Source: RMDB library TTRDES, as collected in RNAgym. The record gives the reactivity of an RNA of 177 nucleotides to DMS and 2A3. The 2A3 profile rests on 76,509 reads. Values cover nucleotides 27 to 126. For DMS, 25,801 sequencing reads were counted.
RNA sequence: GGGAACGACUCGAGUAGAGUCGAAAAGAUAUGGACGUAGGAUGAAUGGCGAUGAAACUGAUCGGAAACGAUCAGUGGAGCCACAUCUACGUCCUAAGUCAAACGCGUAGUGUUCGCACUACGCGAACGUAAUUUAGUAGUUCGCUACUAAAUUACGAAAAGAAACAACAACAACAAC
Reactivity to DMS in 0.01 (KOAc 150mM, MgCl2 10mM, bicine 150mM(pH8.5), 24C), signal-to-noise 9, nucleotides 027 to 126: g000a030u000a190u010g000g000a020c000g030u000a020g020g010a050u010g010a300a170u010g020g030c000g010a130u020g000a120a160a020c000u000g000a010u000c000g000g000a040a060a100c000g010a010u000c000a010g000u000g000g000a030g020c000c010a110c050a020u010c000u000a010c000g020u000c000c000u000a000a040g000u000c010a090a120a240c020g010c000g010u010a010g020u000g000u000u010c300g020c000a010c010u000a000c010g010c000g010a020a050
Reactivity to 2A3 in 0.01 (KOAc 150mM, MgCl2 10mM, bicine 150mM(pH8.5), 24C), signal-to-noise 9, nucleotides 027 to 126: g010a010u040a020u100g000g000a000c010g010u020a050g200g300a090u090g130a290a300u300g050g000c060g300a300u010g000a010a010a000c000u000g000a000u000c000g000g010a020a030a020c010g000a000u000c000a000g000u000g000g000a000g000c000c010a140c000a060u020c000u000a000c000g000u000c000c000u000a000a000g000u000c020a100a030a090c010g000c010g000u010a010g000u010g090u120u100c300g020c120a000c000u000a000c010g000c000g000a030a000

Background
The RNA was probed in 150 mM KOAc, 10 mM MgCl2 and 150 mM bicine (pH 8.5) at 24 C.